[RMDB]
RNA sequence: GGGAACGACUCGAGUAGAGUCGAAAACCUCGCAUCGUGGUGCGAUAAGAGGGAAACAGUCAAGGCUAGCCUCGAGCGCCUUGAACUUGCCGUUAGCGCAGGCAACACCCCCAAUCGCCUUCGGGUGUCGGUUUUCUCGCUUCGGCGAGAAAACCGAAAAAGAAACAACAACAACAAC
Reactivity to 2A3 in 0.01 (KOAc 150mM, MgCl2 10mM, bicine 150mM(pH8.5), 24C), signal-to-noise 2, nucleotides 027 to 126: c000c000u000c000g000c000a190u020c020g040u000g090g040u160g070c000g020a020u040a140a010g180a040g000g020g010a000a230a000c040a090g070u000c000a000a000g000g010c010u300a050g010c020c070u240c220g000a050g050c010g010c000c000u000u000g000a000a030c020u070u040g000c000c050g050u140u220a060g030c040g010c120a000g000g090c010a030a070c000a080c100c000c000c000c000a060a120u010c010g030c000c000u020u010c020g130g040g030u070g070